RNA sequence: GGGAACGACUCGAGUAGAGUCGAAAAAUAAUGACCCGCAGUAUUGGGUCAUACUGGCUCAGCUUCUGGUCCACUUCCAAAGGGGAGAUAGUGUCAAAUGUCUGAGUAGUGCAAGGCCUCAACCCACAAUGCUGACAUAAUUUAUCUAGACUUAACCUAUCAGUACGCUUUUCGAAGCGUACUGAUAAAAAGAAACAACAACAACAAC
Reactivity to DMS in 0.01 (KOAc 150mM, MgCl2 10mM, bicine 150mM(pH8.5), 24C), signal-to-noise 1, nucleotides 027 to 156: a080u000a100a010u010g010a070c000c000c000g020c120a180g040u020a140u000u000g000g040g010u000c000a010u000a030c090u020g030g000c010u000c000a130g000c030u000u000c010u010g030g020u000c010c060a060c060u010u010c030c030a010a100a060g010g010g000g030a070g010a030u010a050g000u010g050u000c030a020a070a020u000g000u010c050u000g000a090g050u010a070g030u010g080c040a130a100g050g010c020c030u000c050a050a110c000c000c020a130c050a110a070u000g000c000u000g010a080c060a060u030a040a080u000u000u000a050u010c070u010a090g000a060c040u020u000a020a120c120c080
Reactivity to 2A3 in 0.01 (KOAc 150mM, MgCl2 10mM, bicine 150mM(pH8.5), 24C), signal-to-noise 4, nucleotides 027 to 156: a000u150a010a050u040g050a050c000c010c050g000c070a050g060u140a090u120u150g000g020g010u000c000a000u050a040c030u050g090g010c000u010c030a010g010c010u040u040c010u060g040g000u010c030c010a020c020u050u000c000c020a190a190a100g110g040g040g010a070g050a080u210a110g070u100g030u030c010a040a040a030u030g060u050c010u040g020a030g030u030a010g020u000g050c050a100a070g000g040c020c000u100c070a080a100c000c030c000a020c040a020a050u050g030c010u020g040a080c020a080u230a150a120u210u210u110a140u100c090u060a080g080a140c040u070u100a070a080c040c030

Structure probing data (DMS and 2A3) for a 207-nucleotide construct. For 2A3, 2,339 sequencing reads were counted. High DMS reactivity at an A or C suggests that its Watson-Crick edge is free. The DMS profile rests on 2,403 reads.